[RMDB]
RNA sequence: GGGAACGACUCGAGUAGAGUCGAAAAGAUAUGGAAGAUAUAGGGAGAAGGUCGGAAACGAUUCUUCUUUGAUCUAUCAUCUUCCUAAGUCAAAACAAAUGCGCCAUGUUCGCAUGGCGCAUUUGAAGUCAAGUAUAAACUUCGGUUUAUACUUGACAAAAGAAACAACAACAACAAC
Reactivity to 2A3 in 0.01 (KOAc 150mM, MgCl2 10mM, bicine 150mM(pH8.5), 24C), signal-to-noise 1, nucleotides 027 to 126: g010a020u080a030u090g000g000a000a000g000a020u010a020u010a000g010g020g020a000g000a010a000g000g000u020c000g070g000a080a030a040c000g020a000u300u190c000u060u010c000u220u040u030g030a010u000c010u000a010u060c080a020u000c010u010u000c000c000u020a000a050g020u040c030a000a020a100a160c010a000a020a000u000g020c000g030c020c050a000u040g090u080u110c290g000c180a020u000g000g000c000g060c030a010u010u010u000g000a060a010
Reactivity to DMS in 0.01 (KOAc 150mM, MgCl2 10mM, bicine 150mM(pH8.5), 24C), signal-to-noise 3, nucleotides 027 to 126: g010a040u000a300u000g000g000a030a000g000a010u000a010u000a010g010g010g000a010g010a000a000g000g020u000c000g000g000a090a090a190c000g010a020u000u030c010u000u000c010u000u000u020g010a050u010c010u000a000u000c190a010u000c000u000u000c000c000u000a020a090g010u010c030a110a070a130a280c010a000a000a000u010g000c000g000c000c000a010u000g030u000u010c200g020c010a020u000g000g000c000g030c000a000u000u000u010g000a120a090
Chemical mapping of a 177-nucleotide RNA with 2A3 and DMS. For 2A3, 2,142 sequencing reads were counted. The data come from the RNA Mapping Database (RMDB), library TTRDEL.